[RMDB]
RNA sequence: GGGAACGACUCGAGUAGAGUCGAAAAGAUAUGGAUAGACGGUAAUGCACACGCUGUAGGGAGUUGUUAUCGGAAACGAUAAUACAACAUCGAUCUACAGCGUGUGCAUUACCGCUAUCCUAAGUCAGUCUAGAGAAACGUUCGCGUUUCUCUAGACAAAAGAAACAACAACAACAAC
Reactivity to DMS in 0.01 (KOAc 150mM, MgCl2 10mM, bicine 150mM(pH8.5), 24C), signal-to-noise 1, nucleotides 027 to 126: g000a070u000a300u030g000g010a020u000a010g000a130c000g010g010u010a000a000u000g000c010a000c000a010c000g000c000u000g010u010a000g000g000g000a150g020u000u000g030u000u000a000u000c000g030g010a140a130a200c020g020a000u000a000a050u010a090c050a020a000c000a260u010c260g010a090u000c000u000a000c000a000g000c010g000u000g030u000g010c000a000u000u000a000c000c000g010c000u000a000u000c000c000u000a000a040g000u000c050a090